[RMDB]
RNA sequence: GGGAACGACUCGAGUAGAGUCGAAAAGCUCGUCUGAUCCGCGUGCUUUCACGGAUAGAUAUCUGGCGGGUGAAAUUGAACUGGAGCUCGUGCCGCAGGGCACGCUUGCCGAGCGCAUGCGCGCGGAGCGUAAAAUCAGCUUCGGCUGAUUUUACGCAAAAGAAACAACAACAACAAC
Reactivity to 2A3 in 0.01 (KOAc 150mM, MgCl2 10mM, bicine 150mM(pH8.5), 24C), signal-to-noise 1, nucleotides 027 to 126: g030c010u010c000g000u020c090u070g070a100u030c000c020g000c020g020u030g030c000u120u160u180c050a030c050g020g030a030u060a110g150a020u200a110u180c020u000g030g040c000g020g040g000u080g010a030a060a040u110u200g020a090a040c050u070g030g010a010g020c020u040c070g000u000g000c020c000g020c110a020g010g030g000c020a000c000g030c030u030u080g000c010c050g000a020g000c020g030c010a030u150g010c020g040c000g020c000g010g060a030
Reactivity to DMS in 0.01 (KOAc 150mM, MgCl2 10mM, bicine 150mM(pH8.5), 24C), signal-to-noise 2, nucleotides 027 to 126: g000c020u000c060g030u000c030u010g030a140u000c010c020g010c040g030u000g020c240u000u010u000c060a040c050g010g000a050u010a120g010a130u000a120u010c020u010g050g030c060g020g010g000u000g010a030a080a080u010u040g000a120a090c090u030g010g000a100g030c010u020c050g040u000g000c020c000g010c300a070g010g000g000c010a020c000g000c070u000u000g030c030c000g000a200g000c080g020c060a120u000g000c030g000c040g030c010g000g000a100

An RNA of 177 nucleotides, treated with 2A3 and DMS and read out base by base. The RNA was probed in 150 mM KOAc, 10 mM MgCl2 and 150 mM bicine (pH 8.5) at 24 C. For 2A3, 1,212 sequencing reads were counted. DMS adducts were read by reverse transcription with MarathonRT.